About this RNA: The record gives the reactivity of an RNA of 207 nucleotides to 2A3. 2A3 adducts were read by reverse transcription with SuperScript II with manganese.

[RMDB]
RNA sequence: GGGAACGACUCGAGUAGAGUCGAAAAUCCUAGAGAGCUUGGCCGUCGGGCCUUAUAGCCGACUUGCUGAGUUUCUCUAGGAGAGUCCCUUUCCCAGCCCUGAGGCGGCUGGUCAAUAAAAGCCUCAAAAACUACCACUGGUUCGCCAGUGGUAGAAGUUAGUACUAGUGUUCGCACUAGUACUAACAAAAGAAACAACAACAACAAC
Reactivity to 2A3 in 0.01 (KOAc 150mM, MgCl2 10mM, bicine 150mM(pH8.5), 24C), signal-to-noise 2, nucleotides 027 to 156: u010c000c000u000a000g000a000g000a000g020c000u000u000g010g000c010c040g020u010c060g050g190g070c020c050u100u130a170u130a060g060c000c000g000a010c020u060u220g000c000u010g010a000g010u050u300u010c000u000c000u000a010g000g000a000g000a000g010u000c000c000c030u010u140u040c000c000c000a000g010c000c020c060u110g000a010g000g000c010g010g020c020u000g020g110u220c050a020a020u070a160a020a000a000g000c000c000u010c000a000a050a040a000a000c000u000a000c000c000a000c000u000g000g040u020u030c110g050c070c000a000g000u000g000g000u000a000g000a000a000